[RMDB]
This 207-nucleotide RNA was probed chemically with 2A3 and DMS. The 2A3 profile rests on 1,032 reads. For DMS the reverse transcriptase was MarathonRT. The RNA was probed in 150 mM KOAc, 10 mM MgCl2 and 150 mM bicine (pH 8.5) at 24 C.
RNA sequence: GGGAACGACUCGAGUAGAGUCGAAAAAACUCAGCUAGGGAGAGUAUAACAUUCAUGUUGACGAGACCUAGACGAAACACAGAGGAAAAUUAUUAAUCACUGGAUAGUAUUAGUAAUGACUGUGUGUAAAACUCUUCUACGUUCGCGUAGAAGAGAACAGGUAGAAGCAGUUCGCUGCUUCUACCUGAAAAGAAACAACAACAACAAC
Reactivity to 2A3 in 0.01 (KOAc 150mM, MgCl2 10mM, bicine 150mM(pH8.5), 24C), signal-to-noise 2, nucleotides 027 to 156: a000a010c010u020c010a020g020c000u000a000g010g020g000a070g010a020g050u100a090u120a300a000c050a030u080u230c100a100u300g030u070u050g030a030c040g000a010g070a050c000c000u000a010g020a010c010g020a000a040a000c010a000c000a010g080a060g060g150a050a110a090a020u000u000a000u000u000a000a010u020c060a000c050u080g100g010a140u300a300g000u000a010u000u000a000g010u010a000a010u040g030a030c010u030g000u010g000u010g040u090a000a000a040a120c000u000c000u000u010c000u000a010c000g010u030u000c220g000c000g120u000a000g000a000a000g000a000g000a000a040
Reactivity to DMS in 0.01 (KOAc 150mM, MgCl2 10mM, bicine 150mM(pH8.5), 24C), signal-to-noise 1, nucleotides 027 to 156: a060a010c040u000c020a060g020c000u000a000g020g020g020a170g000a170g010u000a080u000a030a060c050a090u000u000c170a140u020g010u010u000g010a090c040g010a260g070a000c030c030u000a080g010a150c100g020a080a100a030c000a010c000a060g020a080g010g000a160a120a040a000u000u000a000u000u000a010a000u000c180a060c070u000g040g050a130u010a120g020u000a070u000u000a040g000u000a000a000u000g030a250c020u010g010u010g010u000g000u000a000a070a020a070c000u050c010u000u000c010u000a000c000g030u000u000c300g040c000g010u000a030g020a000a000g000a000g090a000a070